[RMDB]
RNA sequence: GGGAACGACUCGAGUAGAGUCGAAAACAGCCUAUCUGAUGACUUCACAUCUUGCUCAGAGUGGUGCCGAAAGAUGUGGGAAGAGACAUUCGACGAUGCGUACAUCAAGCUGUAUGAACUUUGGAAAUCGAGAGGUCAAUGACUAUGUCAAACGUAACGGGCCAAUCUACUUCGGUAGAUUGGCCCGAAAAGAAACAACAACAACAAC
Reactivity to 2A3 in 0.01 (KOAc 150mM, MgCl2 10mM, bicine 150mM(pH8.5), 24C), signal-to-noise 1, nucleotides 027 to 156: c020a010g000c000c020u150a260u120c080u040g020a020u050g080a180c000u020u020c070a020c000a200u060c080u060u080g000c020u000c050a070g050a020g110u030g080g000u000g050c000c000g060a080a060a010g010a000u030g000u000g090g050g020a150a000g100a000g000a050c000a090u080u070c050g060a000c100g050a070u050g060c020g060u080a030c000a020u120c040a030a000g000c020u000g020u070a080u100g100a020a080c000u190u110u240g010g000a050a050a080u060c030g000a020g030a010g060g050u040c010a080a010u180g000a010c000u080a060u180g130u090c000a020a110a110c020g030u040a170a000